Background:
An RNA of 177 nucleotides, treated with DMS and 2A3 and read out base by base. The DMS profile rests on 1,622 reads. The 2A3 profile rests on 817 reads. Conditions: 150 mM KOAc, 10 mM MgCl2 and 150 mM bicine (pH 8.5), 24 C. For DMS the reverse transcriptase was MarathonRT.
RNA sequence: GGGAACGACUCGAGUAGAGUCGAAAAGCCGGCCGACUCCUGGGGCCCGUGAAAAGGGGGGCAGUUGGACCGUACCGAGAACCGACACAGGUGCCCUGGGUGAGUAGCCUAAGGCGUGGCGGAACAUUACUAAUUGCCGUUUCGACGGCAAUUAGUAAAAAGAAACAACAACAACAAC
Reactivity to DMS in 0.01 (KOAc 150mM, MgCl2 10mM, bicine 150mM(pH8.5), 24C), signal-to-noise 1, nucleotides 027 to 126: g000c030c000g000g020c000c000g000a140c020u000c000c000u000g000g000g020g000c050c060c000g070u000g000a030a050a090a090g000g000g000g000g000g000c060a160g040u010u030g000g000a280c270c110g000u000a110c030c000g000a050g040a070a160c040c000g020a170c060a010c030a080g040g010u060g000c020c010c000u000g000g000g030u060g010a090g000u040a070g010c020c070u010a150a080g040g000c010g060u000g070g010c010g000g000a080a000c210a230u090
Reactivity to 2A3 in 0.01 (KOAc 150mM, MgCl2 10mM, bicine 150mM(pH8.5), 24C), signal-to-noise 1, nucleotides 027 to 126: g020c000c000g000g010c020c010g060a050c030u030c000c010u040g050g000g010g000c000c000c030g020u030g090a160a050a050a070g080g010g000g000g040g000c000a050g030u170u100g080g080a190c000c040g100u080a110c010c010g020a010g000a120a020c000c000g030a020c000a000c000a070g120g000u110g000c000c010c000u000g000g000g000u040g040a070g020u100a030g030c010c000u050a090a000g000g000c010g000u000g030g000c000g030g010a060a000c010a060u010